[RMDB]
RNA sequence: GGGAACGACUCGAGUAGAGUCGAAAAUUACGAAUACGCAAUGGCAGCCUAAUUAGGCUUGCCGCACUGAUUGGCUGACGUCAGAUACGCCGACCAGUGACAAACUUAUCCGACUGGCACCCAAAGCCGUCUGUCGCAGCGGGUGUAAGAUUUUUUAGAAUUAAACUUAGUUCGCUAAGUUUAAUUCAAAAGAAACAACAACAACAAC
Reactivity to 2A3 in 0.01 (KOAc 150mM, MgCl2 10mM, bicine 150mM(pH8.5), 24C), signal-to-noise 2, nucleotides 027 to 156: u150u090a030c030g030a050a080u190a080c050g030c190a000a160u080g000g000c000a000g010c000c010u170a300a300u240u300a080g010g000c000u010u100g000c000c000g000c000a000c000u000g000a010u000u010g000g000c000u000g010a010c050g010u000c000a000g020a020u000a020c020g000c000c000g010a000c000c000a000g010u020g080a070c030a060a120a020c080u170u140a010u040c020c000g020a030c030u020g030g010c000a010c040c000c000a010a000a010g020c020c040g130u070c200u190g140u150c080g000c020a000g020c010g010g020g000u010g010u000a010a000g010a040u000u000u060u000u060u130a050
Reactivity to DMS in 0.01 (KOAc 150mM, MgCl2 10mM, bicine 150mM(pH8.5), 24C), signal-to-noise 1, nucleotides 027 to 156: u000u000a180c070g010a120a080u010a100c060g020c110a120a090u040g000g060c000a060g010c000c010u000a200a150u000u000a040g060g050c020u000u010g050c040c010g050c060a070c040u030g010a040u000u010g000g010c010u020g030a100c080g010u000c070a070g000a250u000a200c290g040c010c010g010a010c000c000a040g040u000g020a070c090a060a090a100c040u000u010a070u010c070c000g020a090c030u010g000g000c000a060c010c000c020a080a300a150g010c040c020g000u000c040u010g030u000c000g040c050a040g000c300g000g010g070u000g020u000a090a070g010a040u000u000u020u000u020u000a300